[RMDB]
RNA sequence: GGGAACGACUCGAGUAGAGUCGAAAAGGGAGUGCACUGAUGAUUCCAGCCGAGAAAUGGCUUUUCUCGCAAAAUCCUUCGCAUUAGGAGGCAUCUGCCGUUUCGUGAUUUCAUUAGUGCUUCAGGCCCCAGUGGUGCUAUUCGUAGCACCACUGGGAAAAGAAACAACAACAACAAC
Reactivity to 2A3 in 0.01 (KOAc 150mM, MgCl2 10mM, bicine 150mM(pH8.5), 24C), signal-to-noise 5, nucleotides 027 to 126: g090g020g010a070g060u160g010c000a000c010u010g000a010u010g000a000u030u020c050c020a050g110c120c040g170a170g010a120a020a010u040g010g020c000u050u030u100u000c120u070c040g000c080a060a090a020a090u050c010c000u050u060c050g040c150a280u170u220a050g030g010a000g000g020c020a070u020c040u060g000c000c010g010u000u020u010c050g060u150g040a130u070u050u000c000a000u010u010a010g010u000g020c000u030u030c020a050g040g030c000
Reactivity to DMS in 0.01 (KOAc 150mM, MgCl2 10mM, bicine 150mM(pH8.5), 24C), signal-to-noise 2, nucleotides 027 to 126: g000g010g020a050g000u000g000c000a000c000u000g010a000u050g000a010u000u010c010c010a240g030c050c100g000a120g000a000a000a000u000g000g020c040u020u000u010u000c050u040c160g000c150a070a080a040a080u010c030c000u020u000c090g070c240a040u030u010a060g050g010a060g020g020c200a030u000c100u030g000c020c000g060u000u000u000c020g000u030g010a040u000u040u000c020a000u000u000a020g010u000g000c000u050u020c040a110g020g000c200